[RMDB]
About this RNA: This 207-nucleotide RNA was probed chemically with 2A3. As a SHAPE reagent, 2A3 marks flexible, mostly unpaired nucleotides at the ribose 2'-OH. The reactions ran in a buffer of 150 mM KOAc, 10 mM MgCl2 and 150 mM bicine (pH 8.5), at 24 C. For 2A3 the reverse transcriptase was SuperScript II with manganese. The 2A3 profile rests on 1,030 reads.

RNA sequence: GGGAACGACUCGAGUAGAGUCGAAAAGAAAGAAAGAAGCGAGCUGGCGCAGCCGCACGGGCAACCGUCAAUCCAGCACUUCACAAGUCUUGUCGUUCUGACAGGACAUCCAUCAACCCACCGGGCAAAAAGGACUACAGCUUCGGCUGUAGUCCAACUACUGCUAGAAGUUCGCUUCUAGCAGUAGAAAAGAAACAACAACAACAAC
Reactivity to 2A3 in 0.01 (KOAc 150mM, MgCl2 10mM, bicine 150mM(pH8.5), 24C), signal-to-noise 2, nucleotides 027 to 156: g020a010a020a000g040a020a100a000g010a030a000g020c070g030a010g010c030u000g050g040c060g030c080a040g070c060c090g040c060a010c010g000g000g000c040a050a060c020c000g010u020c030a010a040u050c010c000a010g020c050a060c020u050u040c040a040c050a180a090g010u000c010u000u000g000u000c010g130u270u210c110u280g000a000c000a000g000g010a000c000a000u000c010c000a040u030c030a040a130c000c010c010a030c070c080g030g010g030c050a000a070a010a020a070g010g030a010c000u000a000c000a000g000c000u040u060c180g050g000c020u010g010u020a000g000u010c000c010a000a000